[RMDB]
RNA sequence: GGGAACGACUCGAGUAGAGUCGAAAACAUGGUGGCAAGUACGACGCGAUAUUGCCCCACCUGCAAUAGAAGCGUAGACAUCAACUGUAGCGAGAGCUACUCAACUUAUGGACCUUAGAGCAUGCGAAGACGACAGGUCCUGUCGGAAUUCGCUAGACGUACCAUACGCGUUCGCGCGUAUGGUACGAAAAGAAACAACAACAACAAC
Reactivity to 2A3 in 0.01 (KOAc 150mM, MgCl2 10mM, bicine 150mM(pH8.5), 24C), signal-to-noise 1, nucleotides 027 to 156: c110a060u090g000g000u010g020g020c010a060a100g030u040a070c170g000a000c010g180c070g010a050u050a000u030u040g010c000c080c010c000a090c040c010u040g020c010a000a040u010a080g150a170a040g040c000g010u040a060g010a060c040a060u170c040a020a050c010u040g030u030a000g000c030g010a000g010a030g080c000u000a010c000u050c100a010a110c070u170u160a100u140g070g000a040c000c030u000u050a110g000a000g160c060a080u120g000c000g000a010a000g060a020c010g000a000c000a000g080g300u130c000c070u000g000u000c010g000g050a200a010u030u000c040g010c010u020a070g020a070